The record gives the reactivity of an RNA of 207 nucleotides to 2A3 and DMS. Conditions: 150 mM KOAc, 10 mM MgCl2 and 150 mM bicine (pH 8.5), 24 C. The 2A3 profile rests on 9,032 reads.
[RMDB]
RNA sequence: GGGAACGACUCGAGUAGAGUCGAAAAGUGUAUUUCGAUACACGCGAUUCCUAAGUCGCUCUGAACUACACGGAGUACGAGAAGCGACGAUCUCGGAAACGAGGGAGCUUCUUGAAACGUGCAGAGCGAUAUGGACAUGUGUGGGAUUCGUCCCAAAGUAUCCUGAUAUAUUCGUAUAUCAGGAUACAAAAGAAACAACAACAACAAC
Reactivity to 2A3 in 0.01 (KOAc 150mM, MgCl2 10mM, bicine 150mM(pH8.5), 24C), signal-to-noise 7, nucleotides 027 to 156: g060u050g030u050a080u030u220u160c180g070a010u010a010c000a000c000g000c010g010a080u050u050c000c000u020a110a030g020u000c000g000c000u000c010u010g070a120a080c100u140a040c300a000c010g020g010a020g020u020a070c170g000a000g000a000a000g000c000g200a260c000g000a030u000c000u000c000g060g040a130a120a080c010g000a000g000g000g000a000g000c000u000u010c000u010u020g010a020a020a010c010g000u010g000c000a000g000a000g000c000g000a000u000a030u040g030g000a040c070a150u220g110u030g020u110g110g010g040a060u070u050c070g030u030c020c000c040a040a070a010
Reactivity to DMS in 0.01 (KOAc 150mM, MgCl2 10mM, bicine 150mM(pH8.5), 24C), signal-to-noise 3, nucleotides 027 to 156: g040u010g030u000a000u000u000u000c210g030a120u000a030c000a010c000g000c070g000a150u000u000c000c010u000a090a190g010u000c010g020c000u000c010u000g000a070a250c060u010a170c020a040c030g030g010a260g020u000a220c160g000a050g010a020a010g000c000g010a080c200g000a040u000c000u000c000g000g020a230a090a270c020g020a050g030g000g010a130g000c000u000u000c010u000u000g000a120a150a130c010g000u010g000c010a100g010a050g040c020g000a010u000a050u000g000g020a080c110a080u020g010u030g000u000g010g020g020a140u010u010c140g010u000c010c010c020a020a030a300